[RMDB]
RNA sequence: GGGAACGACUCGAGUAGAGUCGAAAAUCUCCGUCGCUAAUUUGUCCUGGGCAGAAAUGUCUGCUCGGAGGCGGGGGAGUCCGGUCUGAAGUGUCCCGGCUAUAAUAAAUCGAUCUUUGCGGGCAGCCCGUUGGCAGGAGGCGCGAGGAAUCCGUCUACUCCAGAAUAUGUUCGCAUAUUCUGGAGUAAAAGAAACAACAACAACAAC
Reactivity to 2A3 in 0.01 (KOAc 150mM, MgCl2 10mM, bicine 150mM(pH8.5), 24C), signal-to-noise 1, nucleotides 027 to 156: u050c010u000c020c070g300u040c020g000c010u060a190a140u190u170u240g040u090c010c010u100g000g010g000c030a040g090a030a240a020u280g100u070c000u000g000c000u000c000g000g000a000g010g000c000g000g000g000g010g000a020g060u060c010c030g000g000u060c080u060g090a050a010g030u000g040u110c030c010c000g040g000c050u060a040u080a160a110u070a090a120a050u150c070g040a050u000c010u080u060u090g000c000g000g000g050c030a020g030c040c000c040g050u030u070g000g000c000a020g080g030a070g000g010c010g000c010g020a030g010g040a070a000u040c000c010g010u010c030u030